Structure probing data (2A3) for a 207-nucleotide construct. The reactions ran in a buffer of 150 mM KOAc, 10 mM MgCl2 and 150 mM bicine (pH 8.5), at 24 C. It was measured as part of the RMDB library OK3TST.
RNA sequence: GGGAACGACUCGAGUAGAGUCGAAAAAGGUAAGCUGGAACUGACCGUUCGGGGUGCUGCCGGUGAGUAAGAACUUCACGCGUACGGGUUCCUUUCGACCCGAGCACUGGAGUAUCGACGGCUCUCACGGUCGGCGUGGAUCACCGGCCCGACGACGAGUACUGCCAUAGUUCGCUAUGGCAGUACUAAAAGAAACAACAACAACAAC
Reactivity to 2A3 in 0.01 (KOAc 150mM, MgCl2 10mM, bicine 150mM(pH8.5), 24C), signal-to-noise 1, nucleotides 027 to 156: a000g090g010u060a030a030g000c030u000g020g010a030a070c030u030g070a110c050c000g070u110u130c040g000g030g000g040u130g060c060u040g000c000c000g020g000u020g000a040g010u070a150a010g020a100a010c000u010u010c010a010c040g050c030g020u130a100c000g000g000g000u050u220c060c000u230u190u170c200g010a000c000c000c000g000a040g020c020a030c100u010g000g000a000g020u020a150u110c000g030a010c010g040g010c010u010c030u100c140a040c030g000g020u000c000g010g020c020g020u100g050g020a040u020c020a000c020c000g000g000c000c000c000g040a080c020g000a000c060g030